[RMDB]
RNA sequence: GGGAACGACUCGAGUAGAGUCGAAAAGCUCAGUUCUAACAGGGUAGUCUGGCAGGACACACAGCAAUUCCCUCUCAGUUUAGGAGGGCCGUCCUAAGAAUAGGGCUGGCUCUUAAAGGCACGAGAGUCUUCUAUACAGGUUCGCCUGUAUAGAAGAAAAAGAAACAACAACAACAAC
Reactivity to DMS in 0.01 (KOAc 150mM, MgCl2 10mM, bicine 150mM(pH8.5), 24C), signal-to-noise 6, nucleotides 027 to 126: g000c000u000c090a120g010u000u000c000u000a100a210c010a020g010g000g040u040a110g020u040c010u000g000g020c240a040g000g000a020c030a040c150a130c300a010g010c010a040a140u010u020c000c000c000u010c020u000c010a120g000u000u000u000a100g030g000a000g000g010g010c020c000g000u010c000c000u020a050a150g050a130a120u020a010g010g000g010c010u030g030g000c000u000c010u000u000a010a120a070g000g000c030a050c120g000a020g000a050g010
Reactivity to 2A3 in 0.01 (KOAc 150mM, MgCl2 10mM, bicine 150mM(pH8.5), 24C), signal-to-noise 9, nucleotides 027 to 126: g000c000u020c040a020g010u030u000c020u030a060a040c010a020g010g070g230u280a090g190u160c010u020g030g000c040a010g010g010a010c020a010c000a010c020a110g010c000a010a080u040u020c000c020c000u010c000u000c000a050g000u030u040u090a200g080g010a000g000g010g000c000c000g000u010c000c000u090a200a150g180a260a280u130a050g020g020g010c110u160g040g000c000u020c000u000u010a020a020a000g010g000c040a010c240g010a010g000a000g040

Structure probing data (DMS and 2A3) for a 177-nucleotide construct. It was measured as part of the RMDB libraries RFM100 and RFMREP. 2A3 adducts were read by reverse transcription with SuperScript II with manganese.